[RMDB]
RNA sequence: GGGAACGACUCGAGUAGAGUCGAAAACAUGUAAAUACGUUAGCAAUCUGACAUCAGAAUACGUACAAUACCACUAUUAUCACGUGACACAACAAGCAUGUUUCACUGUGAAUUCUGACCAGUAUACAGAUUUAGUUCGUCUAAAUAUGGAGCAUCCAGGCUCUCUGGAAUUCGUUCCAGAGAGCCUAAAAGAAACAACAACAACAAC
Reactivity to 2A3 in 0.01 (KOAc 150mM, MgCl2 10mM, bicine 150mM(pH8.5), 24C), signal-to-noise 2, nucleotides 027 to 156: c020a010u050g060u230a110a100a070u030a100c110g050u040u170a010g040c030a050a060u020c000u020g050a020c010a040u080c040a010g020a080a000u050a060c080g050u020a080c080a070a120u030a140c040c040a050c170u200a040u300u040a050u130c000a000c050g000u000g010a000c000a000c000a130a020c020a100a010g220c150a190u060g000u030u060u000c020a000c050u120g000u020g000a030a000u070u010c000u010g020a020c000c060a040g080u020a000u000a010c010a000g050a060u040u070u060a040g110u000u040c030g030u030c100u040a000a180a060u120a020u090g020g000a000g050c050a020u080c010c070